The record gives the reactivity of an RNA of 177 nucleotides to 2A3 and DMS. Conditions: 150 mM KOAc, 10 mM MgCl2 and 150 mM bicine (pH 8.5), 24 C. The DMS profile rests on 1,174 reads.
RNA sequence: GGGAACGACUCGAGUAGAGUCGAAAAGGGAAAUGACCCCUACCAAGCCCCACCCCUCCCGCCCGAGGCGCUUCGUCACUCGGGCGGGUGAACAUCACCGGUUGAGCUGGAUUUCGGGGCCCUCAACCUCGUACGACUUAUUCGUAAGUCGUACGAGAAAAGAAACAACAACAACAAC
Reactivity to 2A3 in 0.01 (KOAc 150mM, MgCl2 10mM, bicine 150mM(pH8.5), 24C), signal-to-noise 3, nucleotides 027 to 126: g090g020g000a070a180a040u180g120a140c000c000c000c000u000a060c000c020a020a020g010c000c000c020c010a040c000c000c030c000u010c000c000c000g000c000c000c000g000a000g040g040c020g020c090u170u220c100g200u180c010a040c050u000c000g000g010g000c000g000g000g000u000g000a010a040c010a050u140c030a040c020c060g040g010u000u010g010a010g040c030u070g040g050a140u060u120u100c060g040g000g010g020c000c010c010u020c010a000a020c010
Reactivity to DMS in 0.01 (KOAc 150mM, MgCl2 10mM, bicine 150mM(pH8.5), 24C), signal-to-noise 1, nucleotides 027 to 126: g000g000g040a100a060a060u000g020a260c080c000c000c030u000a210c010c010a170a060g010c000c000c000c000a300c060c020c000c000u000c040c000c000g040c000c000c000g000a020g020g050c080g100c140u000u000c220g020u000c020a220c000u000c030g100g000g020c060g030g020g000u000g000a080a060c080a120u000c100a100c110c160g030g000u000u000g000a050g000c210u100g050g020a140u000u020u020c180g030g020g010g000c050c020c010u000c030a020a000c020
The 2A3 profile rests on 1,535 reads. Reactivities are given for positions 27 through 126. Source: RMDB library RFM100, as collected in RNAgym. For 2A3 the reverse transcriptase was SuperScript II with manganese.